[RMDB]
RNA sequence: GGGAACGACUCGAGUAGAGUCGAAAACUGCCAGGAUUGGAAAGCACUCUGGGCCGAAUGGUCGAGUAGCACCCAGAGGGAGGAAGCCACACGGAGGUAGCAGAGAAAUCACCUCCAGAGGACCCCUACCUGUUAUACAGUUCGCUGUAUAACAGGUAAAAGAAACAACAACAACAAC
Reactivity to 2A3 in 0.01 (KOAc 150mM, MgCl2 10mM, bicine 150mM(pH8.5), 24C), signal-to-noise 2, nucleotides 027 to 126: c030u040g030c010c010a030g070g050a140u090u060g030g040a100a060a020g030c020a020c040u030c020u100g020g040g000c030c020g190a270a240u300g040g010u040c030g020a020g020u050a020g020c000a040c010c020c000a040g030a070g080g020g000a040g020g040a070a040g030c010c010a070c010a010c090g000g000a000g060g000u070a040g090c130a030g080a010g040a190a130a020u050c000a010c000c010u000c000c010a010g000a020g000g000a040c000c000c000c000u000
Reactivity to DMS in 0.01 (KOAc 150mM, MgCl2 10mM, bicine 150mM(pH8.5), 24C), signal-to-noise 2, nucleotides 027 to 126: c020u010g020c030c010a100g000g000a080u010u030g030g000a050a050a120g010c070a100c000u000c010u010g010g000g010c200c020g000a180a070u020g030g010u000c060g010a070g000u000a100g000c060a130c060c000c010a080g000a130g000g000g010a040g010g000a100a060g010c020c000a030c170a240c160g020g000a030g020g030u000a090g020c110a070g020a140g000a070a100a130u000c030a060c000c000u000c010c020a060g000a190g000g010a140c070c000c020c100u000